[RMDB]
RNA sequence: GGGAACGACUCGAGUAGAGUCGAAAAAAGAAGUACAGGAUCAUAAAGCAAGGAAGUAUAGGAUUGAAGAGGUCACAGGGUACACUAAUCCAGCAAACAACAUUUUAGUCUCAGUUAACCACGAAUUAGGUCCCAUGCUUACCUUCAUCCGUGGCAAGGUCCCGCACUGAUUCGUCAGUGCGGGACCAAAAGAAACAACAACAACAAC
Reactivity to 2A3 in 0.01 (KOAc 150mM, MgCl2 10mM, bicine 150mM(pH8.5), 24C), signal-to-noise 1, nucleotides 027 to 156: a000a010g150a040a000g040u060a040c040a030g020g020a000u050c030a040u110a110a050a010g010c010a060a000g000g030a010a000g000u100a080u050a080g060g020a020u040u060g110a090a090g010a000g030g080u100c000a000c030a080g050g010g020u020a040c040a010c010u020a070a070u020c070c030a050g030c020a100a060a060c030a030a090c020a060u020u090u090u110a030g020u000c000u000c060a120g000u100u100a060a030c040c010a010c010g000a020a020u020u020a010g040g000u040c080c010c000a060u140g040c000u110u300a100c000c000u020u100c070a100u090c070c070g020u000g000g030c000a000a030

Overview: This 207-nucleotide RNA was probed chemically with 2A3. Source: RMDB library OK3TST, as collected in RNAgym. The reactions ran in a buffer of 150 mM KOAc, 10 mM MgCl2 and 150 mM bicine (pH 8.5), at 24 C.